Record summary
Structure probing data (2A3 and DMS) for a 177-nucleotide construct. For 2A3 the reverse transcriptase was SuperScript II with manganese. Conditions: 150 mM KOAc, 10 mM MgCl2 and 150 mM bicine (pH 8.5), 24 C.
RNA sequence: GGGAACGACUCGAGUAGAGUCGAAAAGUUCAAGACCAUGCUAUCAUGCUGCAGAUGGUUUAUCAAGCUAUGGUCACCUAUUAACCCUAACUUGUUCAAUAUCAUCUUGUGAGGGAAUCGUUCACUACGAUCAAUAUGCGUUCGCGCAUAUUGAUCGAAAAGAAACAACAACAACAAC
Reactivity to 2A3 in 0.01 (KOAc 150mM, MgCl2 10mM, bicine 150mM(pH8.5), 24C), signal-to-noise 3, nucleotides 027 to 126: g060u050u080c090a130a040g020a000c010c000a000u040g000c010u080a080u180c050a030u140g030c070u100g040c020a040g020a160u050g050g090u060u130u010a150u120c050a070a010g020c020u100a000u050g000g010u030c020a050c010c020u090a110u140u180a040a080c000c010c000u000a030a030c010u030u060g030u230u090c060a070a060u050a050u170c050a050u000c000u090u100g040u020g080a050g000g010g060a000a060u080c070g020u020u070c070a070c160u080a050
Reactivity to DMS in 0.01 (KOAc 150mM, MgCl2 10mM, bicine 150mM(pH8.5), 24C), signal-to-noise 3, nucleotides 027 to 126: g010u000u000c210a100a090g000a060c020c030a070u000g010c030u010a090u010c080a090u010g000c080u000g030c090a070g000a060u000g000g010u010u010u020a070u000c110a060a020g030c010u000a000u000g000g000u000c050a110c130c080u030a110u010u020a110a110c030c000c010u000a050a040c080u010u000g020u020u000c160a020a050u010a060u000c050a020u000c020u000u010g020u000g010a120g010g000g000a040a040u010c080g000u000u010c020a090c060u000a100